Source information: This 177-nucleotide RNA was probed chemically with DMS and 2A3. The 2A3 profile rests on 1,135 reads. For DMS the reverse transcriptase was MarathonRT. The RNA was probed in 150 mM KOAc, 10 mM MgCl2 and 150 mM bicine (pH 8.5) at 24 C. 2A3 adducts were read by reverse transcription with SuperScript II with manganese.

RNA sequence: GGGAACGACUCGAGUAGAGUCGAAAAGUGGUGCCACGGUGUCGUGGAAGGCACGCGUAGGCCGAGUGUGAGUGGGUGCGCAAGUGGGUGCGCGAAUGCGCGGGGCGUGCGAGGUGAGUGUGUGCGCGGAAUACUAAAGCUUCGGCUUUAGUAUUCCAAAAGAAACAACAACAACAAC
Reactivity to DMS in 0.01 (KOAc 150mM, MgCl2 10mM, bicine 150mM(pH8.5), 24C), signal-to-noise 2, nucleotides 027 to 126: g000u000g020g020u000g020c020c020a040c030g010g040u000g020u010c010g000u010g030g000a150a120g010g010c010a020c020g020c020g010u010a100g060g000c020c020g000a070g010u010g010u000g000a140g000u000g010g000g010u030g010c030g010c050a100a100g010u010g000g000g010u010g020c020g030c020g000a090a050u000g000c050g010c010g030g000g000g020c050g020u010g020c060g000a140g000g020u010g020a110g010u000g030u010g010u010g020c040g020c180
Reactivity to 2A3 in 0.01 (KOAc 150mM, MgCl2 10mM, bicine 150mM(pH8.5), 24C), signal-to-noise 1, nucleotides 027 to 126: g050u100g060g010u140g060c010c010a000c000g050g000u030g020u040c020g010u140g170g130a150a070g050g020c000a000c010g270c000g000u020a160g000g050c030c000g020a070g040u240g000u010g000a080g000u090g010g090g000u070g020c070g000c020a000a110g030u120g120g120g080u060g060c000g000c000g020a160a040u230g010c030g000c000g000g030g000g000c040g020u050g000c000g030a020g030g010u050g020a050g030u030g020u020g000u010g010c050g020c070